[RMDB]
RNA sequence: GGGAACGACUCGAGUAGAGUCGAAAAUGCCUACAAGACCGCCGUGGAGGGCCAGGUGGCGCUGGGGCAGAUCAACCAGCAGCGCGUCGAGGUGUUCAAGGCCAAGCUGGACGCCGUACAGUCGAGCAUUUAGCAAUCAUUUCGAUGAUUGCUAAAUAAAAGAAACAACAACAACAAC
Reactivity to 2A3 in 0.01 (KOAc 150mM, MgCl2 10mM, bicine 150mM(pH8.5), 24C), signal-to-noise 4, nucleotides 027 to 126: u020g020c000c000u030a090c040a060a040g060a080c000c020g000c010c030g150u140g040g050a160g040g050g040c010c020a040g030g020u030g030g000c040g000c030u010g000g000g030g000c010a020g020a100u090c030a010a060c010c010a000g060c010a010g010c020g010c010g070u070c020g040a060g020g010u050g030u040u060c070a080a020g030g000c030c020a050a010g030c010u030g010g000a030c020g000c020c030g040u110a070c030a030g010u030c020g070a010g020c020
Reactivity to DMS in 0.01 (KOAc 150mM, MgCl2 10mM, bicine 150mM(pH8.5), 24C), signal-to-noise 9, nucleotides 027 to 126: u010g010c020c010u000a110c110a070a110g010a110c060c030g020c040c020g020u010g010g010a140g010g010g010c030c050a100g000g020u000g000g010c050g010c090u000g000g010g010g010c060a050g000a100u010c130a100a160c030c010a070g020c060a080g010c050g010c040g010u000c040g010a080g010g010u000g010u000u000c080a070a130g010g010c030c080a060a120g020c030u000g000g000a060c030g010c010c030g000u010a060c120a090g000u000c030g000a070g010c080

This 177-nucleotide RNA was probed chemically with 2A3 and DMS. Conditions: 150 mM KOAc, 10 mM MgCl2 and 150 mM bicine (pH 8.5), 24 C. Source: RMDB library OK2TRN, as collected in RNAgym. The DMS profile rests on 18,658 reads. The 2A3 profile rests on 11,001 reads.